[RMDB]
RNA sequence: GGGAACGACUCGAGUAGAGUCGAAAAACAGUGAUAGACAGCUGGUCUUUGACAUUUAUAACGUCCAUAUUUACAACAAGGAGAUGGAUAACUUUGAUGAAGGAACAAUCAAGGUACUAGAGGAAACCUAUGUGUCUAUGUUCGCAUAGACACAUAGAAAAGAAACAACAACAACAAC
Reactivity to DMS in 0.01 (KOAc 150mM, MgCl2 10mM, bicine 150mM(pH8.5), 24C), signal-to-noise 7, nucleotides 027 to 126: a050c050a040g010u000g000a140u010a080g020a150c090a120g010c030u000g010g000u000c030u000u000u010g010a130c060a070u000u000u010a070u010a100a120c200g010u000c010c030a040u000a040u010u000u010a090c130a070a110c220a070a100g000g010a060g010a030u010g000g000a040u000a080a070c110u000u000u010g000a030u000g010a080a070g000g010a060a070c110a090a060u000c020a020a010g010g000u000a020c060u000a040g000a060g000g000a060a060a050c120
Reactivity to 2A3 in 0.01 (KOAc 150mM, MgCl2 10mM, bicine 150mM(pH8.5), 24C), signal-to-noise 7, nucleotides 027 to 126: a000c020a010g010u030g060a090u080a070g130a040c020a020g040c030u060g020g060u020c020u040u040u080g070a050c030a090u040u140u080a200u070a100a040c050g010u000c010c000a010u050a090u100u130u120a140c120a230a020c020a080a100g090g010a090g020a030u020g010g020a010u020a130a040c040u050u050u090g040a040u050g020a070a050g090g010a060a030c040a050a060u010c000a000a000g010g000u020a040c020u020a020g040a010g050g050a050a010a010c000

The record gives the reactivity of an RNA of 177 nucleotides to DMS and 2A3. The RNA was probed in 150 mM KOAc, 10 mM MgCl2 and 150 mM bicine (pH 8.5) at 24 C. DMS adducts were read by reverse transcription with MarathonRT.